[RMDB]
RNA sequence: GGGAACGACUCGAGUAGAGUCGAAAACAAUCUUCCUAAUAUUCACUUGAUUUUUUUCUUCUUACCUAGAGGCUACAUGGUAAUGGGAGAUUCUUUCAACACUUCUCUCUUCAAGCAGACAUUCCAAAGAAUCUUUACUAAAGAUUUUAAUGGAGAAGAUGCCUAUUACUUUCGAGUAAUAGGCAUCAAAAGAAACAACAACAACAAC
Reactivity to 2A3 in 0.01 (KOAc 150mM, MgCl2 10mM, bicine 150mM(pH8.5), 24C), signal-to-noise 3, nucleotides 027 to 156: c080a060a060u020c030u020u020c010c000u060a150a120u150a160u240u130c070a060c070u070u060g070a170u200u090u040u020u050u130u030c030u110u020c030u040u040a040c010c020u000a020g030a050g200g000c030u050a100c060a080u070g000g000u070a040a020u070g010g050g010a020g010a020u000u050c030u040u110u090c040a080a060c030a060c060u070u060c040u000c010u000c000u160u110c070a040a020g080c030a020g130a090c030a090u170u130c000c020a020a050a020g000a030a030u020c000u010u070u090a290c110u300a230a060a000g000a000u000u030u040u090a120a060u050g000g000a050g040a050a020
Reactivity to DMS in 0.01 (KOAc 150mM, MgCl2 10mM, bicine 150mM(pH8.5), 24C), signal-to-noise 1, nucleotides 027 to 156: c050a090a070u010c050u000u000c000c010u010a110a210u000a120u010u020c040a010c070u000u010g000a010u020u020u030u020u000u000u000c020u000u000c040u010u010a070c040c000u000a190g000a090g020g040c050u000a070c040a060u000g010g020u010a090a070u030g000g010g010a080g010a100u000u000c030u000u000u010c110a060a150c070a080c050u000u000c020u010c000u000c010u010u000c080a080a100g040c030a070g000a040c110a130u000u000c030c010a050a170a130g000a010a040u000c000u000u000u000a220c060u000a040a040a040g000a070u000u000u000u000a030a140u000g000g000a050g050a100a230
This 207-nucleotide RNA was probed chemically with 2A3 and DMS. 2A3 is a SHAPE reagent: it acylates the 2'-hydroxyl of flexible nucleotides of all four kinds. Reactivities are given for positions 27 through 156. The reactions ran in a buffer of 150 mM KOAc, 10 mM MgCl2 and 150 mM bicine (pH 8.5), at 24 C.